An RNA of 177 nucleotides, treated with DMS and 2A3 and read out base by base. As a SHAPE reagent, 2A3 marks flexible, mostly unpaired nucleotides at the ribose 2'-OH. For DMS the reverse transcriptase was MarathonRT. Source: RMDB library M2PK50, as collected in RNAgym.
RNA sequence: GGGAACGACUCGAGUAGAGUCGAAAACCUGUUGACUUCGGUCAACAGGAAAAGGUGGAUGCUACGCUACCGAAGUAGCAAAAGUGCAGAAGGAACGCACAUAAACUUAUCCGUUCGCGGAUAAGAACGUAGAUAUACCCUUCGGGGUAUAUCUACGAAAAGAAACAACAACAACAAC
Reactivity to DMS in 0.01 (KOAc 150mM, MgCl2 10mM, bicine 150mM(pH8.5), 24C), signal-to-noise 2, nucleotides 027 to 126: c000c000u010g030u000u000g000a020c000u000u010c200g020g010u000c000a020a010c020a020g010g000a030a020a090a110g000g020u000g010g010a190u000g010c010u010a000c030g000c080u000a190c080c020g020a080a120g010u000a010g020c020a020a130a090a050g000u000g000c000a090g010a080a130g010g000a070a110c150g040c040a040c020a070u010a020a030a130c000u000u000a010u000c000c010g020u000u030c160g030c010g000g000a000u000a000a000g000a050a150
Reactivity to 2A3 in 0.01 (KOAc 150mM, MgCl2 10mM, bicine 150mM(pH8.5), 24C), signal-to-noise 3, nucleotides 027 to 126: c010c000u000g000u000u000g020a010c010u030u020c230g050g000u000c000a000a000c000a000g010g040a020a070a000a030g100g010u100g070g060a110u090g030c000u010a010c030g000c020u050a040c010c050g110a090a000g010u010a010g000c000a010a050a020a030g020u010g000c020a040g040a230a070g180g020a130a060c060g040c000a000c000a020u200a000a100a000c000u000u000a000u010c010c000g020u020u060c300g000c020g060g000a010u000a000a000g010a050a000